[RMDB]
RNA sequence: GGGAACGACUCGAGUAGAGUCGAAAAAGGAUCGCUCGGCGUCAAGAACGGCAUGAUCGCUCAUAUCAUUGAGGCCGCACCGAACAGGAUCGUUGCUGUCAUCGGAGAAGGUGACCAGCGGCGGCGGGGCUAGUCCUCCAUUCGUGGAGGACUAGCCAAAAGAAACAACAACAACAAC
Reactivity to 2A3 in 0.01 (KOAc 150mM, MgCl2 10mM, bicine 150mM(pH8.5), 24C), signal-to-noise 2, nucleotides 027 to 126: a000g090g000a000u040c070g000c060u110c030g040g000c020g280u060c020a000a010g130a120a020c000g010g000c050a030u160g160a140u100c100g070c060u120c000a070u040a100u220c160a100u000u130g090a050g040g030c000c000g120c000a020c000c000g080a040a050c030a130g180g000a100u060c070g010u000u020g000c020u000g000u000c020a000u000c000g300g000a210g040a290a080g050g000u000g000a000c000c140a000g000c000g060g000c000g000g020c000g000g020
The data come from the RNA Mapping Database (RMDB), library OK1LIB. The record gives the reactivity of an RNA of 177 nucleotides to 2A3. Values are in units of 0.01, from 0 to 300, in steps of 10. The 2A3 profile rests on 748 reads.